[RMDB]
RNA sequence: GGGAACGACUCGAGUAGAGUCGAAAAGGUGUGAGAGCACGACCCGCGACAUCGGGACUGAGACACUGCCCGGACUCCUACGGGAGGCUGCAGCAACGAAUCUUCCGCAAUGGGCGCAAGCCUGACGGUAUCCUAAAUGCUUCGGCAUUUAGGAUACAAAAGAAACAACAACAACAAC
Reactivity to DMS in 0.01 (KOAc 150mM, MgCl2 10mM, bicine 150mM(pH8.5), 24C), signal-to-noise 1, nucleotides 027 to 126: g000g040u030g010u000g000a250g000a110g000c050a030c010g000a100c030c020c040g000c050g000a070c100a070u000c110g000g000g020a160c060u000g020a070g000a120c110a040c030u010g040c000c180c000g020g000a060c070u000c000c010u000a120c120g010g020g060a050g000g010c020u000g000c050a010g000c000a030a020c070g010a160a090u010c030u000u000c020c000g030c170a090a070u010g000g010g010c010g030c260a030a080g030c020c000u000g000a060c130g010
Reactivity to 2A3 in 0.01 (KOAc 150mM, MgCl2 10mM, bicine 150mM(pH8.5), 24C), signal-to-noise 1, nucleotides 027 to 126: g060g000u020g020u040g070a150g000a010g020c020a010c070g120a120c020c030c000g060c030g050a030c010a150u150c010g000g000g070a090c050u050g030a000g010a100c010a000c060u050g070c010c050c000g080g010a050c000u000c000c030u090a070c130g050g000g000a010g010g000c000u050g000c010a010g000c000a000a080c030g060a030a020u020c060u110u030c030c000g100c060a040a100u160g010g010g000c020g020c050a050a000g000c000c070u040g020a030c070g060

An RNA of 177 nucleotides, treated with DMS and 2A3 and read out base by base. The reactions ran in a buffer of 150 mM KOAc, 10 mM MgCl2 and 150 mM bicine (pH 8.5), at 24 C. Reactivities are rounded to 0.1 and cut off at 0 and 3. DMS adducts were read by reverse transcription with MarathonRT. For 2A3 the reverse transcriptase was SuperScript II with manganese. The 2A3 profile rests on 1,101 reads. Values cover nucleotides 27 to 126.